Background: Conditions: 150 mM KOAc, 10 mM MgCl2 and 150 mM bicine (pH 8.5), 24 C. Structure probing data (DMS and 2A3) for a 177-nucleotide construct. 2A3 adducts were read by reverse transcription with SuperScript II with manganese. Reactivities are given for positions 27 through 126.
[RMDB]
RNA sequence: GGGAACGACUCGAGUAGAGUCGAAAAGGCCAUCUCCGUCUUUCUCGCCCCCUUCACUCCCCCCUUGGGCUCCACAAAGACGUACUGGAUGCGGUCGUGGAUCUGGGGCAGUUCCUCGUUGCGCUCGCCUAGUACUACGAUUCGUCGUAGUACUAGGAAAAGAAACAACAACAACAAC
Reactivity to DMS in 0.01 (KOAc 150mM, MgCl2 10mM, bicine 150mM(pH8.5), 24C), signal-to-noise 4, nucleotides 027 to 126: g000g020c010c030a070u010c030u020c030c060g030u000c040u010u000u000c040u010c070g020c020c010c020c010c040u010u010c050a120c060u010c010c000c010c010c030c030u000u020g010g000g010c060u000c030c060a060c100a070a070a110g010a080c020g010u030a070c040u010g010g000a130u010g000c070g030g010u010c040g010u020g000g000a080u010c070u020g000g000g000g000c050a080g000u010u000c000c010u000c080g000u000u000g000c030g000c080u010c040g020
Reactivity to 2A3 in 0.01 (KOAc 150mM, MgCl2 10mM, bicine 150mM(pH8.5), 24C), signal-to-noise 8, nucleotides 027 to 126: g040g010c020c010a070u030c030u020c020c020g050u010c020u030u080u010c030u020c020g040c000c000c000c000c000u030u070c040a080c070u040c000c010c010c000c000c020u060u070g060g020g020c040u020c010c000a050c020a010a160a030g100a040c060g050u070a040c060u110g170g040a160u120g090c020g030g030u070c040g020u030g030g010a040u020c050u060g000g010g030g000c000a010g010u040u030c000c000u030c040g030u020u050g020c020g000c020u010c000g030
Notes: High DMS reactivity at an A or C suggests that its Watson-Crick edge is free. The data come from the RNA Mapping Database (RMDB), library OK1LIB.